Overview: An RNA of 177 nucleotides, treated with DMS and 2A3 and read out base by base. For DMS the reverse transcriptase was MarathonRT. Conditions: 150 mM KOAc, 10 mM MgCl2 and 150 mM bicine (pH 8.5), 24 C.

[RMDB]
RNA sequence: GGGAACGACUCGAGUAGAGUCGAAAACAAGCCCUGGAAACGGGGUCUAAUACCGGAUAUGAGCCUCCGAGGCAUCUCGGGGGCUGGAAAGCUCCGGCGGUGAAGGAUGAGCCCGCGGCCUAUCAGCAAGCGAUAUAUUGUUCGCAAUAUAUCGCUUAAAAGAAACAACAACAACAAC
Reactivity to DMS in 0.01 (KOAc 150mM, MgCl2 10mM, bicine 150mM(pH8.5), 24C), signal-to-noise 4, nucleotides 027 to 126: c090a200a290g000c000c000c000u000g020g010a050a090a190c010g020g000g000g010u000c060u000a080a080u000a070c000c000g000g010a050u000a200u000g000a030g010c000c000u000c000c000g010a030g010g010c300a160u010c000u000c000g010g000g010g000g010c000u010g000g000a060a060a160g000c100u000c000c000g010g010c070g020g030u000g010a070a080g000g000a060u000g000a120g020c020c010c030g030c050g010g010c010c020u000a090u000c060a100g020c200
Reactivity to 2A3 in 0.01 (KOAc 150mM, MgCl2 10mM, bicine 150mM(pH8.5), 24C), signal-to-noise 1, nucleotides 027 to 126: c010a020a060g030c000c010c020u010g030g040a000a100a030c020g020g000g000g000u000c030u050a100a100u080a060c000c000g010g020a010u000a060u200g060a050g010c020c010u020c010c000g010a020g040g110c150a250u190c040u000c010g000g000g000g000g000c000u000g010g010a000a000a000g000c010u000c000c010g010g010c000g060g060u060g030a070a020g020g030a050u040g020a000g130c020c020c010g020c000g010g000c020c020u080a170u080c020a020g050c060